An RNA of 207 nucleotides, treated with DMS and 2A3 and read out base by base. As a SHAPE reagent, 2A3 marks flexible, mostly unpaired nucleotides at the ribose 2'-OH.

RNA sequence: GGGAACGACUCGAGUAGAGUCGAAAAUUUGACGAACUGUCUUGUAAUUUGGAAAAAGUAGUUAAACCAAAAAAUCAGUUGUCAAGCGUAGCUUUAGCCGAUUAUAAUAUAUCUCAGAGUAUUGCUAAAGUUCCUAAGAUUAAGGCAGUCGACAACAACAGAACCUGAUAUUCGUAUCAGGUUCUGUAAAAGAAACAACAACAACAAC
Reactivity to DMS in 0.01 (KOAc 150mM, MgCl2 10mM, bicine 150mM(pH8.5), 24C), signal-to-noise 1, nucleotides 027 to 156: u020u000u020g000a140c030g040a150a060c000u000g020u020c040u010u000g030u040a110a200u000u000u000g020g010a050a060a110a090a120g070u000a070g020u000u000a060a130a230c020c050a000a000a040a110a110a040u000c070a090g000u000u000g000u000c040a080a100g070c120g000u000a130g050c100u000u000u000a010g050c030c030g000a050u010u000a120u000a040a100u040a080u000a060u000c050u010c100a070g110a230g050u010a050u000u000g000c040u000a040a020a060g000u000u000c020c000u000a030a090g020a250u000u010a050a120g010g020c050a020g010u000c000g000a100c060a030a100c050a080
Reactivity to 2A3 in 0.01 (KOAc 150mM, MgCl2 10mM, bicine 150mM(pH8.5), 24C), signal-to-noise 1, nucleotides 027 to 156: u080u010u050g010a040c010g020a180a030c010u000g010u000c040u030u030g150u130a110a140u120u050u080g040g020a190a040a070a090a040g000u130a010g000u150u220a080a130a110c040c100a090a060a000a000a000a020u080c040a050g060u120u050g070u010c050a030a020g070c030g180u130a040g060c050u000u000u040a000g000c010c040g050a040u050u120a070u150a150a060u060a010u050a100u130c050u040c100a020g000a040g180u180a050u150u080g010c000u000a010a010a010g020u010u020c000c000u060a100a080g020a070u090u050a000a000g000g000c000a010g010u000c000g040a010c040a070a000c010a000
For 2A3, 570 sequencing reads were counted. The data come from the RNA Mapping Database (RMDB), library OK3TST. High DMS reactivity at an A or C suggests that its Watson-Crick edge is free.